[RMDB]
RNA sequence: GGGAACGACUCGAGUAGAGUCGAAAAGAUAUGGAAUUCCUCGCAUCGAUCCGUAACAUCACUCGGAAACGAGUGUGGGGGAGCGAGUGAAUUCCUAAGUCAAAAGCUGCUCCUUCGGGAGCAGCAAUCUUUCUUUUCAGUUCGCUGAAAAGAAAGAAAAAGAAACAACAACAACAAC
Reactivity to 2A3 in 0.01 (KOAc 150mM, MgCl2 10mM, bicine 150mM(pH8.5), 24C), signal-to-noise 3, nucleotides 027 to 126: g020a020u050a040u130g000g000a020a020u010u000c020c010u000c020g000c010a300u300c090g160a150u090c050c020g160u240a140a080c030a160u250c010a020c000u010c010g010g000a070a050a020c010g000a010g020u010g000u040g000g040g040g000g030a050g010c010g010a010g020u300g000a020a000u010u030c000c000u010a060a020g030u000c010a050a010a010a230g020c000u000g000c010u000c040c000u030u110c300g090g010g010a030g000c000a000g010c000a000a000
Reactivity to DMS in 0.01 (KOAc 150mM, MgCl2 10mM, bicine 150mM(pH8.5), 24C), signal-to-noise 4, nucleotides 027 to 126: g000a030u000a300u000g000g000a030a000u000u010c000c000u000c010g000c010a270u000c180g000a060u010c010c010g000u000a050a180c150a040u010c010a010c000u010c000g000g000a080a070a140c000g020a020g020u000g020u000g010g000g000g000g010a040g010c010g000a010g010u000g000a000a010u000u000c000c000u000a000a090g010u000c030a090a080a120a170g010c000u000g000c000u000c000c000u010u020c210g010g020g010a000g010c010a000g010c000a010a020

Overview:
An RNA of 177 nucleotides, treated with 2A3 and DMS and read out base by base. For 2A3 the reverse transcriptase was SuperScript II with manganese. For 2A3, 4,483 sequencing reads were counted. For DMS the reverse transcriptase was MarathonRT.